[RMDB]
Structure probing data (2A3 and DMS) for a 177-nucleotide construct.
RNA sequence: GGGAACGACUCGAGUAGAGUCGAAAACGAGCGACAACACAGUCGACCCUUCGACCGUCGGGUCGCGGGACGCGAUCGUGCGGGCACGGAGCGCGGAAGGGGACGCGUCGGACGGCGCGGUGGCGAAAUACCUACGGGGAUUCGUCCCCGUAGGUAUAAAAGAAACAACAACAACAAC
Reactivity to 2A3 in 0.01 (KOAc 150mM, MgCl2 10mM, bicine 150mM(pH8.5), 24C), signal-to-noise 2, nucleotides 027 to 126: c040g010a020g060c020g030a010c000a190a040c070a030c040a150g030u000c000g070a100c010c000c000u040u040c030g070a090c010c010g120u080c080g070g000g040u020c010g000c000g020g050g070a060c080g010c010g060a040u070c010g030u060g020c040g000g100g000c060a020c080g060g060a130g090c010g000c010g030g030a070a060g000g000g020g010a020c010g000c000g050u030c020g000g170a150c120g040g000c010g010c010g050g000u020g020g010c010g010a090a070
Reactivity to DMS in 0.01 (KOAc 150mM, MgCl2 10mM, bicine 150mM(pH8.5), 24C), signal-to-noise 4, nucleotides 027 to 126: c150g020a200g010c010g000a040c020a080a130c180a120c180a090g010u000c000g000a120c060c020c050u000u000c000g010a060c010c020g000u000c160g010g010g020u000c000g010c280g010g000g020a120c040g040c030g000a030u010c040g010u000g000c050g030g010g010c050a090c050g000g000a090g020c040g020c030g000g000a130a090g000g000g010g010a180c030g010c020g010u000c030g020g030a090c080g010g000c010g000c030g010g020u000g010g000c050g000a040a070
Source: RMDB library OK2TST, as collected in RNAgym.
In probing experiments dimethyl sulfate is read out at A N1 and C N3, which are open when not base-paired.
For 2A3 the reverse transcriptase was SuperScript II with manganese.
For DMS the reverse transcriptase was MarathonRT.